About this RNA
The record gives the reactivity of an RNA of 177 nucleotides to 2A3 and DMS. The data come from the RNA Mapping Database (RMDB), library RFMREP. 2A3 adducts were read by reverse transcription with SuperScript II with manganese.
RNA sequence: GGGAACGACUCGAGUAGAGUCGAAAAUAACAAGCAACGACGAAGACAAUAAAAACAACACGUAACGACUCCAGCACAACAAAAACAAAAUCGCGGAGGCGCAGCUAACUGAUUCUUUUGGAGAGGACCUUCAUAUACUGUUCGCAGUAUAUGAAGGAAAAGAAACAACAACAACAAC
Reactivity to 2A3 in 0.01 (KOAc 150mM, MgCl2 10mM, bicine 150mM(pH8.5), 24C), signal-to-noise 3, nucleotides 027 to 126: u050a020a000c040a030a030g110c040a030a030c040g110a000c050g050a030a010g080a060c040a090a090u200a140a120a040a030a020c030a020a020c040a000c040g040u060a050a000c030g020a020c020u030c030c010a030g060c020a010c010a080a050c010a040a150a040a060a000c040a030a190a010a080u100c040g000c010g030g030a000g020g000c030g000c000a020g050c010u040a000a080c020u040g010a070u050u070c010u000u070u060u110g120g010a120g000a030g040g020a010
Reactivity to DMS in 0.01 (KOAc 150mM, MgCl2 10mM, bicine 150mM(pH8.5), 24C), signal-to-noise 2, nucleotides 027 to 126: u020a080a130c070a070a110g030c060a060a050c040g000a100c030g000a070a090g020a070c100a090a040u010a030a080a080a100a090c070a080a020c090a060c080g000u000a090a110c030g000a040c000u010c000c010a110g020c030a090c070a060a030c060a040a050a050a030a060c070a040a060a050a070u000c090g030c070g010g010a110g000g000c020g020c100a090g020c080u000a020a050c050u000g010a050u000u000c000u000u000u000u000g030g000a070g000a040g000g000a200